[RMDB]
RNA sequence: GGGAACGACUCGAGUAGAGUCGAAAAGAUAUGGAUGUAAUGCCAUAGUGUCGAAGAACUCGGAAACGAGGGAGACAUCAUGGCCUCUUACAUCCUAAGUCAAAACGCAUGCCUUCGGGCAUGCGAACCACAUGGUAUCGUUCGCGAUACCAUGUGGAAAAGAAACAACAACAACAAC
Reactivity to 2A3 in 0.01 (KOAc 150mM, MgCl2 10mM, bicine 150mM(pH8.5), 24C), signal-to-noise 1, nucleotides 027 to 126: g040a010u090a040u110g000g000a000u000g000u010a010a030u300g000c000c000a020u040a050g010u010g000u020c020g040a300a050g010a110a050c010u000c020g030g030a080a060a070c010g010a020g000g000g000a020g000a000c010a000u070c010a000u020g000g000c000c000u000c000u010u000a000c010a000u000c000c000u000a010a000g020u020c010a000a050a020a110c010g000c000a000u010g010c010c000u070u090c300g060g020g000c000a010u010g020c000g010a000a020
Reactivity to DMS in 0.01 (KOAc 150mM, MgCl2 10mM, bicine 150mM(pH8.5), 24C), signal-to-noise 2, nucleotides 027 to 126: g010a040u000a300u000g000g020a000u000g000u000a060a000u010g000c000c000a000u000a080g020u000g010u000c000g000a100a160g000a090a210c000u000c000g020g000a120a090a260c000g000a060g000g020g000a060g010a000c010a000u000c090a030u000g000g010c000c000u000c010u000u000a000c010a000u000c000c000u000a010a090g000u000c040a080a030a150a220c010g020c000a010u000g000c020c000u000u000c240g040g000g030c000a000u000g000c000g000a000a090